[RMDB]
RNA sequence: GGGAACGACUCGAGUAGAGUCGAAAAGAAAGAAAGAAAGAGGUAUGGAGUCCUGUGGCAUCCAUGAGACCACCUUCAACUCCAUCAUGAAGUGUGACGUGGACAUCCGAAAGGACCUGUAUGCCAAUGAGUCUUGCAAGUUCGCUUGCAAGACUCAAAAAGAAACAACAACAACAAC
Reactivity to 2A3 in 0.01 (KOAc 150mM, MgCl2 10mM, bicine 150mM(pH8.5), 24C), signal-to-noise 3, nucleotides 027 to 126: g190a000a070a010g100a030a060a010g070a010a040a020g110a040g060g010u060a020u060g020g020a120g030u020c000c010u090g040u270g070g000c010a020u010c000c000a020u080g000a060g010a180c020c020a000c010c010u000u000c000a060a190c100u070c050c010a130u190c060a050u030g020a000a030g060u130g010u000g180a050c080g000u000g010g000a000c000a130u070c010c000g040a110a030a000g000g010a020c020c000u030g070u020a000u010g040c010c030a010a050
Reactivity to DMS in 0.01 (KOAc 150mM, MgCl2 10mM, bicine 150mM(pH8.5), 24C), signal-to-noise 2, nucleotides 027 to 126: g010a020a070a000g000a080a100a110g030a030a050a080g000a030g000g010u000a060u000g000g000a150g000u000c010c010u000g000u030g010g000c300a300u010c010c010a020u000g000a100g000a130c160c000a060c040c060u000u000c000a060a130c070u020c090c050a030u000c100a080u010g050a000a010g000u030g000u000g010a140c050g030u010g000g000a000c050a100u070c000c000g020a110a140a020g000g000a000c040c050u020g000u050a020u000g010c050c060a040a150

This 177-nucleotide RNA was probed chemically with 2A3 and DMS. Conditions: 150 mM KOAc, 10 mM MgCl2 and 150 mM bicine (pH 8.5), 24 C. It was measured as part of the RMDB library RFM100. The DMS profile rests on 1,805 reads.